[RMDB]
RNA sequence: GGGAACGACUCGAGUAGAGUCGAAAAGAGGAGCACCUCAUCUGGAGUCUGGCAGGAAUGUUGAAGGACUGAGGGGCUAGCCUCAGGCAGACGAAAGGCAUCGCAAAGGCUGGAAAACAUCGGAGUGCGUAGCUGAAUCAUUCGUGAUUCAGCUACGAAAAGAAACAACAACAACAAC
Reactivity to 2A3 in 0.01 (KOAc 150mM, MgCl2 10mM, bicine 150mM(pH8.5), 24C), signal-to-noise 3, nucleotides 027 to 126: g040a010g000g030a040g010c030a040c020c010u030c010a070u020c040u040g060g030a060g060u050c020u040g050g030c040a040g030g110a130a090u100g040u100u120g100a100a040g080g000a010c030u030g000a010g010g020g010g020c050u050a070g130c020c000u010c000a000g060g000c020a030g020a080c020g050a080a020a010g040g010c010a040u040c030g000c050a080a070a010g050g000c030u040g020g030a040a060a010a020c020a040u060c070g070g010a090g040u150g060
Reactivity to DMS in 0.01 (KOAc 150mM, MgCl2 10mM, bicine 150mM(pH8.5), 24C), signal-to-noise 3, nucleotides 027 to 126: g010a060g030g010a090g000c060a030c030c020u000c040a120u000c080u010g000g010a150g020u000c060u000g000g010c050a040g000g030a110a050u000g010u000u000g010a190a100g020g010a060c140u000g010a040g010g000g010g010c070u000a090g030c000c010u000c010a020g000g010c050a040g020a090c100g000a070a080a100g010g000c040a040u000c060g010c090a040a090a090g010g000c030u000g000g000a070a040a060a090c100a020u010c080g010g000a110g000u010g010